[RMDB]
RNA sequence: GGGAACGACUCGAGUAGAGUCGAAAAUCCAUCUCGACUUGCGCUGCGAUAGCCGAGUUGCCGGCGCGCACCGCGGCAUCCAGCUUGGCCAGCAGAUCGCCACCGGGCUCGUCGUCAUCGAGAUGGGGCGCGAUCGCCAAUUCGUUGGCGAUCGCGCAAAAGAAACAACAACAACAAC
Reactivity to 2A3 in 0.01 (KOAc 150mM, MgCl2 10mM, bicine 150mM(pH8.5), 24C), signal-to-noise 1, nucleotides 027 to 126: u010c000c000a020u000c000u010c010g030a040c060u050u060g000c160g000c180u110g030c040g220a170u260a070g000c000c000g000a000g030u000u110g080c030c010g050g000c000g010c000g000c010a160c090c000g010c010g030g000c000a000u000c000c000a090g010c000u040u060g030g000c020c000a000g020c040a030g060a110u000c090g040c020c000a010c090c060g010g040g000c000u000c010g070u000c070g020u060c000a080u060c030g000a020g010a040u020g000g040g000
Conditions: 150 mM KOAc, 10 mM MgCl2 and 150 mM bicine (pH 8.5), 24 C. Structure probing data (2A3) for a 177-nucleotide construct. The 2A3 profile rests on 699 reads. It was measured as part of the RMDB library OK1LIB. For 2A3 the reverse transcriptase was SuperScript II with manganese.